[RMDB]
RNA sequence: GGGAACGACUCGAGUAGAGUCGAAAAUGUGGACUCGCUGCGUUCUAGCUACCCUGCUGGACUAAUCGAUGCCUACAUUGAAGGUAAGUUCACAAAUCUUAGCUCAGGCAGCGUAUACCCCGACUUCUCGCGCAUUCAUAACCAUGCAGACGUGGAGCACUUCCAUUAAAUUCGUUUAAUGGAAGUGAAAAGAAACAACAACAACAAC
Reactivity to DMS in 0.01 (KOAc 150mM, MgCl2 10mM, bicine 150mM(pH8.5), 24C), signal-to-noise 3, nucleotides 027 to 156: u000g030u000g020g020a130c050u010c020g030c050u000g010c030g030u000u000c060u010a100g020c030u000a050c060c050c060u010g030c060u000g010g020a030c040u010a070a100u010c030g010a160u010g010c030c020u000a080c080a150u000u000g010a140a090g000g020u000a080a070g000u010u000c010a090c050a040a080a080u010c040u000u000a050g030c030u000c070a100g030g000c010a020g020c050g050u000a080u000a120c050c000c020c020g000a090c040u000u000c040u000c020g020c050g040c030a100u010u000c020a110u020a120a150c060c060a050u000g020c040a130g010a080c050g030u000g000g010a160g000
Reactivity to 2A3 in 0.01 (KOAc 150mM, MgCl2 10mM, bicine 150mM(pH8.5), 24C), signal-to-noise 6, nucleotides 027 to 156: u180g030u070g040g040a040c020u010c050g010c010u020g000c030g160u130u050c040u030a000g000c000u030a050c030c020c050u050g020c130u000g010g010a010c010u050a070a110u140c120g080a060u130g010c000c010u070a090c080a230u090u270g080a060a010g030g010u050a030a040g010u010u020c010a000c010a030a080a060u090c070u090u080a010g010c010u030c090a020g080g000c010a000g000c010g020u010a030u070a070c000c000c000c000g020a010c000u020u000c020u020c010g010c000g000c010a020u030u070c030a060u120a240a120c070c010a020u030g010c020a030g040a120c020g020u030g000g010a010g000
Annotation:
The record gives the reactivity of an RNA of 207 nucleotides to DMS and 2A3. As a SHAPE reagent, 2A3 marks flexible, mostly unpaired nucleotides at the ribose 2'-OH. Source: RMDB library OK3TST, as collected in RNAgym. For DMS the reverse transcriptase was MarathonRT. For DMS, 7,534 sequencing reads were counted.